Structure probing data (DMS and 2A3) for a 207-nucleotide construct. It was measured as part of the RMDB library OK3TST. The reactions ran in a buffer of 150 mM KOAc, 10 mM MgCl2 and 150 mM bicine (pH 8.5), at 24 C. The DMS profile rests on 3,278 reads. DMS adducts were read by reverse transcription with MarathonRT. For 2A3 the reverse transcriptase was SuperScript II with manganese.
RNA sequence: GGGAACGACUCGAGUAGAGUCGAAAACUGCGAUUACAGAACACAAAGAACUUGGCGGCGAUUUGGAGAGUUGGCUAAUACAUUUCUCGAUUAUCCCCAUUUUAAUCAGAUCCAUUUUCCGGGGAGUAUUGUCUUUAGCCAUUUUCGUAAGACAAGAUCCUGCUUUUAGUUUCGACUAAAAGCAGGAAAAAGAAACAACAACAACAAC
Reactivity to DMS in 0.01 (KOAc 150mM, MgCl2 10mM, bicine 150mM(pH8.5), 24C), signal-to-noise 2, nucleotides 027 to 156: c020u000g020c010g000a160u000u040a250c080a180g020a070a030c030a130c030a040a060a150g010a070a140c040u000u000g040g000c050g000g010c050g000a100u010u000u010g010g000a160g010a110g020u000u010g050g000c030u010a040a070u020a090c060a060u000u000u000c030u000c010g000a090u000u000a110u010c010c010c000c010a180u000u010u000u010a060a100u000c060a110g020a160u000c030c060a120u000u000u000u000c060c000g040g000g000g000a060g020u000a040u000u000g010u010c040u000u000u000a080g020c050c020a060u020u020u000u000c050g020u000a060a110g000a060c030a000a100g000a140
Reactivity to 2A3 in 0.01 (KOAc 150mM, MgCl2 10mM, bicine 150mM(pH8.5), 24C), signal-to-noise 1, nucleotides 027 to 156: c000u060g020c020g090a100u150u130a030c030a090g110a120a010c040a010c030a060a220a000g040a140a040c020u110u090g050g000c060g030g000c030g010a050u000u020u190g070g010a100g000a010g040u000u060g030g000c000u000a000a010u030a050c030a030u080u150u040c030u050c050g030a060u030u060a040u250c020c000c020c000a010u080u110u040u240a080a040u030c010a020g030a030u030c070c110a130u170u070u090u030c020c050g000g000g000g000a000g000u050a050u040u020g000u010c020u020u020u030a010g000c020c000a040u050u040u050u110c030g030u020a040a050g020a020c030a110a040g000a100